Record summary: This 177-nucleotide RNA was probed chemically with 2A3. Reactivities are given for positions 27 through 126.
[RMDB]
RNA sequence: GGGAACGACUCGAGUAGAGUCGAAAAGCGCCUGCUGCUUCUAUUUCCAAAUUACGGAUGGUAACCUGACUCCACUUCAAUAUGGCAUCGGUGAGUAGAAAACCAGGUUUGAAUGUCAGCAGUAGCUGCGUAGCGCGUCAUUCGUGACGCGCUACGCAAAAGAAACAACAACAACAAC
Reactivity to 2A3 in 0.01 (KOAc 150mM, MgCl2 10mM, bicine 150mM(pH8.5), 24C), signal-to-noise 2, nucleotides 027 to 126: g000c000g040c000c000u000g000c000u000g000c000u050u030c020u070a130u000u170u000c030c020a020a170a160u300u150a230c140g140g000a040u110g080g000u080a060a050c000c000u000g070a020c050u010c040c000a000c020u120u030c090a090a050u090a140u180g180g000c020a050u080c070g000g000u030g000a080g020u100a010g220a060a000a040a040c090c000a000g000g040u080u090u000g000a000a000u140g060u170c030a000g060c030a000g010u110a000g000c060u060

For 2A3 the reverse transcriptase was SuperScript II with manganese.